Chemical mapping of a 177-nucleotide RNA with 2A3 and DMS. Conditions: 150 mM KOAc, 10 mM MgCl2 and 150 mM bicine (pH 8.5), 24 C. The 2A3 profile rests on 651 reads. For 2A3 the reverse transcriptase was SuperScript II with manganese.

[RMDB]
RNA sequence: GGGAACGACUCGAGUAGAGUCGAAAAAGGUCGAGGUCGGGCUGGGCAUCGGGUUCGGUAAACUGCGCAAAGCGCGGAGCCACGUCGCGCGUGCGUGCCCCGCGAUGCGCUUCCCAGGACUGGCGGAUAACGCGCGAGAAUUCGUUCUCGCGCGUUAAAAAGAAACAACAACAACAAC
Reactivity to 2A3 in 0.01 (KOAc 150mM, MgCl2 10mM, bicine 150mM(pH8.5), 24C), signal-to-noise 1, nucleotides 027 to 126: a000g100g010u020c070g040a020g060g080u050c070g000g000g000c040u100g140g120g000c000a110u080c010g000g000g040u080u010c000g000g000u050a110a170a030c030u150g000c010g040c010a020a130a080g000c000g000c100g050g010a010g050c070c000a040c020g020u050c020g000c010g000c060g040u080g000c040g000u010g040c000c000c000c010g000c000g000a020u040g010c020g010c000u020u000c000c000c070a010g010g000a040c000u000g030g040c000g110g000a070
Reactivity to DMS in 0.01 (KOAc 150mM, MgCl2 10mM, bicine 150mM(pH8.5), 24C), signal-to-noise 1, nucleotides 027 to 126: a000g020g000u000c010g030a010g050g030u000c000g000g000g000c010u000g060g000g000c120a080u000c070g010g000g060u000u050c000g000g030u010a000a000a110c170u080g000c000g020c000a060a120a170g000c000g100c090g040g000a230g010c200c030a080c010g000u000c150g000c170g020c070g000u080g030c000g040u000g050c010c000c000c010g060c000g020a100u000g000c010g010c000u000u010c000c000c010a230g000g000a120c030u030g170g000c030g000g000a300